[RMDB]
RNA sequence: GGGAACGACUCGAGUAGAGUCGAAAAUUUCAAACAAACUUCUCUGAUAGUCUUUAUCGAAAUGUGGGAAAUCAAUCAACUGCUGUUCCAAAAGAAAUUCUCGAGAUUCUUCAAUUAAAUCAUUUCGAAACUUGGGACAAUUCGUUGUCCCAAGUUUAAAAGAAACAACAACAACAAC
Reactivity to 2A3 in 0.01 (KOAc 150mM, MgCl2 10mM, bicine 150mM(pH8.5), 24C), signal-to-noise 1, nucleotides 027 to 126: u060u100u000c020a120a030a020c030a060a130a090c060u050u050c010u010c010u000g040a110u060a150g080u130c040u150u130u020a090u150c010g010a090a000a000u100g000u010g020g110g000a000a020a050u010c050a000a030u060c000a020a200c000u070g000c010u030g060u050u030c000c000a000a000a000a040g060a000a140a000u070u000c050u090c070g190a210g040a090u060u030c050u050u110c090a100a050u080u090a070a130a050u120c070a050u030u070u020c020g030
Reactivity to DMS in 0.01 (KOAc 150mM, MgCl2 10mM, bicine 150mM(pH8.5), 24C), signal-to-noise 1, nucleotides 027 to 126: u020u030u010c130a140a050a140c170a060a170a120c150u000u020c030u000c030u000g000a060u020a030g030u000c000u000u010u010a060u010c030g000a020a000a000u000g010u000g020g010g000a000a050a030u010c060a010a130u040c200a050a210c100u030g020c080u000g000u010u010c030c020a040a120a090a120g000a050a000a090u000u010c070u000c010g010a070g040a080u000u000c040u000u000c100a060a210u020u000a030a050a070u030c040a040u000u000u020c080g000

Source: RMDB library OK1LIB, as collected in RNAgym. This 177-nucleotide RNA was probed chemically with 2A3 and DMS. High 2A3 reactivity points to a flexible backbone, as in loops and unpaired stretches.